[RMDB]
Source: RMDB library OK3TST, as collected in RNAgym. Structure probing data (2A3 and DMS) for a 207-nucleotide construct. Conditions: 150 mM KOAc, 10 mM MgCl2 and 150 mM bicine (pH 8.5), 24 C.
RNA sequence: GGGAACGACUCGAGUAGAGUCGAAAAGAGUAACUGUUGCAUCAGGGCAGAGGUCAUUUUGCUUCUGGGAAAGUAUAAUACCCAACCCAAGCUCAUCAGGGAAGAAGCCUGGCUGGUGCAGGGAUGCUUAGCUGAGACCUGCAGACCUAUUCAGCAACAGCUGACUAGUAUUCGUACUAGUCAGCUGAAAAGAAACAACAACAACAAC
Reactivity to 2A3 in 0.01 (KOAc 150mM, MgCl2 10mM, bicine 150mM(pH8.5), 24C), signal-to-noise 3, nucleotides 027 to 156: g060a000g060u120a100a020c030u040g060u100u080g010c010a040u020c040a060g030g060g000c060a020g040a050g130g020u040c070a080u050u120u090u110g010c000u040u090c030u060g000g020g050a080a070a010g050u070a030u030a200a090u140a090c000c010c000a040a070c020c010c010a040a020g020c030u010c100a110u030c060a100g080g030g000a040a120g010a030a000g070c020c010u040g010g020c040u050g000g010u050g040c020a030g020g020g010a030u130g030c050u110u080a060g020c020u060g030a000g030a100c040c040u030g000c060a000g020a040c010c000u040a090u080u070c030a020g040c010a030a040
Reactivity to DMS in 0.01 (KOAc 150mM, MgCl2 10mM, bicine 150mM(pH8.5), 24C), signal-to-noise 2, nucleotides 027 to 156: g000a130g010u010a090a110c050u000g020u000u010g030c020a090u010c110a170g010g060g050c040a070g000a070g020g010u020c060a120u000u010u000u010g020c000u000u000c030u010g030g000g000a070a050a180g040u000a050u020a040a150u000a150c000c010c030a170a110c010c020c010a050a100g010c010u010c030a060u020c050a070g000g020g020a170a110g000a080a130g000c000c020u000g000g040c030u000g000g020u010g000c010a050g000g010g020a120u000g020c010u000u000a100g030c000u000g000a070g010a150c010c000u010g000c050a050g000a090c040c050u010a110u000u000c030a050g000c020a140a210